The record gives the reactivity of an RNA of 177 nucleotides to DMS and 2A3. It was measured as part of the RMDB library OK2TST. For DMS, 3,059 sequencing reads were counted. The reactions ran in a buffer of 150 mM KOAc, 10 mM MgCl2 and 150 mM bicine (pH 8.5), at 24 C.

[RMDB]
RNA sequence: GGGAACGACUCGAGUAGAGUCGAAAACUUGGCCCUGGCUACCGCGUACUCCUGGGAUGCCUGGCGCUUCCGCCACGGUGCUGCGUAGUGCCGGUGGUCCUGCGCUGCCCACGUCGCUAUCUGCCUCGUAGUUGAACGGAUUCGUCCGUUCAACUACAAAAGAAACAACAACAACAAC
Reactivity to DMS in 0.01 (KOAc 150mM, MgCl2 10mM, bicine 150mM(pH8.5), 24C), signal-to-noise 2, nucleotides 027 to 126: c080u000u010g000g020c020c010c010u000g000g010c020u000a040c060c060g000c120g000u000a040c020u000c030c030u000g000g010g010a120u000g020c020c030u000g010g000c030g010c220u000u010c120c100g000c030c000a060c110g020g010u000g040c050u010g020c170g020u010a050g020u000g030c000c000g010g020u000g000g000u010c030c070u000g000c100g010c040u000g010c020c010c020a100c090g000u000c060g040c040u000a060u000c060u000g010c010c060u010c130
Reactivity to 2A3 in 0.01 (KOAc 150mM, MgCl2 10mM, bicine 150mM(pH8.5), 24C), signal-to-noise 2, nucleotides 027 to 126: c020u070u120g050g020c040c010c020u000g020g000c020u040a030c020c000g040c090g060u030a030c020u070c040c030u070g050g050g060a130u120g030c000c030u010g060g010c020g020c040u200u050c110c050g010c010c010a060c110g040g000u090g050c030u060g030c070g140u130a010g010u020g040c000c000g030g030u020g000g000u010c010c000u050g000c040g000c030u060g020c010c010c020a020c020g050u060c020g000c030u040a060u120c030u060g000c000c000u080c100